[RMDB]
RNA sequence: GGGAACGACUCGAGUAGAGUCGAAAACCCGCGGUUCUUCCUCGACUCGGACCGGCUCAUCUCGACAAGAGGCGGCGGUCCUCAGUGCUCUUACUCUUUUCUGUAAAGAGGAGACUGCUGGACCCGCCGCCCAAGUUCGAGCAUGAGCCAAGUUCCGGAUUAAAAAUUGGUUCGCCAAUUUUUAAUCAAAAGAAACAACAACAACAAC
Reactivity to 2A3 in 0.01 (KOAc 150mM, MgCl2 10mM, bicine 150mM(pH8.5), 24C), signal-to-noise 2, nucleotides 027 to 156: c000c000c010g000c030g020g050u100u080c060u170u130c050c070u080c080g090a080c070u020c080g000g000a020c000c030g000g020c010u000c010a010u010c020u000c010g000a010c030a130a160g070a130g080g000c000g010g000c000g000g000u000c000c000u000c000a030g000u060g110c000u000c010u150u250a300c010u050c010u100u110u090u120c180u300g270u300a070a000a000g010a000g010g000a000g030a000c000u020g070c040u000g010g000a030c090c230c060g000c000c000g000c000c010c000a000a000g010u060u020c020g000a000g010c060a010u020g000a000g010c000c000a000a000g010u080u000c010c000g000
This 207-nucleotide RNA was probed chemically with 2A3. Reactivities are given for positions 27 through 156. For 2A3, 990 sequencing reads were counted. 2A3 is a SHAPE reagent: it acylates the 2'-hydroxyl of flexible nucleotides of all four kinds. It was measured as part of the RMDB library VIROID. Values are in units of 0.01, from 0 to 300, in steps of 10.